An RNA of 177 nucleotides, treated with 2A3 and DMS and read out base by base. The reactions ran in a buffer of 150 mM KOAc, 10 mM MgCl2 and 150 mM bicine (pH 8.5), at 24 C. For DMS, 3,374 sequencing reads were counted. It was measured as part of the RMDB library OK2TST.

[RMDB]
RNA sequence: GGGAACGACUCGAGUAGAGUCGAAAACUUCUAUCGCGGAUGCGAAGCAGCGGAACCUCAUGGGAGGCCCAGGCCGCAAUCUUAGCCACGACUCUGUACCCUUACGUUUCCGCCAACUGUCCAGCCCAAUUUCUGUUAACUUCGGUUAACAGAAAUUAAAAGAAACAACAACAACAAC
Reactivity to 2A3 in 0.01 (KOAc 150mM, MgCl2 10mM, bicine 150mM(pH8.5), 24C), signal-to-noise 3, nucleotides 027 to 126: c010u060u060c030u060a170u130c050g030c040g110g100a070u140g050c020g080a080a050g040c040a010g000c020g070g040a110a200c010c020u050c030a170u200g160g070g060a030g040g030c040c020c000a030g070g020c000c010g040c050a060a070u040c030u100u110a020g000c020c010a040c040g040a040c030u000c000u050g030u130a100c010c000c000u020u040a030c030g020u000u010u020c010c000g030c000c020a030a040c020u030g040u000c000c040a020g010c030c000c000
Reactivity to DMS in 0.01 (KOAc 150mM, MgCl2 10mM, bicine 150mM(pH8.5), 24C), signal-to-noise 4, nucleotides 027 to 126: c070u010u010c060u010a060u010c060g020c060g010g000a080u010g010c020g000a070a110g010c140a110g000c040g000g000a100a120c050c020u000c050a120u010g010g010g000a060g010g020c100c030c050a080g000g010c020c030g000c070a050a060u010c060u000u000a080g010c040c030a170c050g000a060c020u000c020u010g020u000a090c050c020c020u010u010a090c070g000u000u010u000c010c040g000c050c100a040a070c070u000g020u000c040c040a080g010c010c020c030